[RMDB]
RNA sequence: GGGAACGACUCGAGUAGAGUCGAAAACUGCCAUGACUCACCCCAAGGGUGCAGGUUGUGCGGCAGUCUGAUGAGUUGCCGCAGCAUCGUUGCCGCGGCCUCCUCGUUGGCUGUCUGAAACCUCGUCCGUAUGUCCUAACUUCGGUUAGGACAUACGAAAAGAAACAACAACAACAAC
Reactivity to 2A3 in 0.01 (KOAc 150mM, MgCl2 10mM, bicine 150mM(pH8.5), 24C), signal-to-noise 4, nucleotides 027 to 126: c030u050g060c050c020a100u120g040a040c010u010c050a050c010c000c000c030a060a170g030g010g000u040g020c060a020g040g050u020u030g070u090g050c040g010g000c000a010g010u040c040u090g030a030u020g000a000g020u060u070g020c010c030g000c000a000g000c010a010u170c160g300u230u140g000c020c000g000c000g000g000c020c000u040c010c010u010c000g030u010u040g000g000c010u000g010u040c050u060g060a040a020a020c010c000u010c020g030u000c020
Reactivity to DMS in 0.01 (KOAc 150mM, MgCl2 10mM, bicine 150mM(pH8.5), 24C), signal-to-noise 4, nucleotides 027 to 126: c070u000g010c070c060a090u000g020a070c020u000c030a120c020c000c010c120a160a140g020g000g020u000g010c210a030g010g020u000u000g030u000g020c180g010g010c000a010g000u000c010u020g020a000u000g000a040g000u010u010g000c000c010g040c000a040g010c010a060u010c220g000u020u000g020c010c040g030c000g000g000c010c030u000c080c010u000c010g030u010u000g010g000c020u010g000u020c000u010g010a090a060a040c040c010u010c080g010u000c080
Structure probing data (2A3 and DMS) for a 177-nucleotide construct. Values are in units of 0.01, from 0 to 300, in steps of 10. The reactions ran in a buffer of 150 mM KOAc, 10 mM MgCl2 and 150 mM bicine (pH 8.5), at 24 C. It was measured as part of the RMDB library OK2TST.